Description
The record gives the reactivity of an RNA of 177 nucleotides to DMS and 2A3. Source: RMDB library M2PK50, as collected in RNAgym.
RNA sequence: GGGAACGACUCGAGUAGAGUCGAAAAGUGGAUUUGUUCGCAAAUCCACAAAUCCCAACAAGCCUGGCUGGCAGCCAAACAACCGAGCUACGCGGCGUAGCAAAAGGUUACACUUCGGUGUAACCAAUCACUUUCUUAUCUUCGGAUAAGAAAGUGAAAAAGAAACAACAACAACAAC
Reactivity to DMS in 0.01 (KOAc 150mM, MgCl2 10mM, bicine 150mM(pH8.5), 24C), signal-to-noise 3, nucleotides 027 to 126: g010u000g000g000a000u010u000u000g010u010u020c170g040c000a020a000a000u000c000c000a010c000a010a080a140u000c000c000c010a110a110c230a120a120g020c080c110u000g000g010c030u000g010g000c070a070g050c010c040a020a100a040c090a050a040c050c050g010a120g000c030u000a010c040g010c050g020g030c080g000u000a020g010c040a090a050a080a060g010g010u000u000a000c000a000c000u000u010c160g020g010u010g000u000a000a010c000c000a070a040
Reactivity to 2A3 in 0.01 (KOAc 150mM, MgCl2 10mM, bicine 150mM(pH8.5), 24C), signal-to-noise 3, nucleotides 027 to 126: g000u010g000g000a000u010u000u030g020u020u000c040g000c110a000a000a000u010c000c010a000c000a000a010a010u010c000c010c000a010a040c020a010a020g060c020c080u060g030g020c000u050g090g050c070a000g020c000c020a040a070a040c020a030a020c010c050g050a040g020c000u010a000c010g050c070g240g000c060g020u010a010g000c020a000a060a020a080g000g010u000u000a000c010a000c000u040u090c220g090g000u000g000u000a000a000c000c000a000a030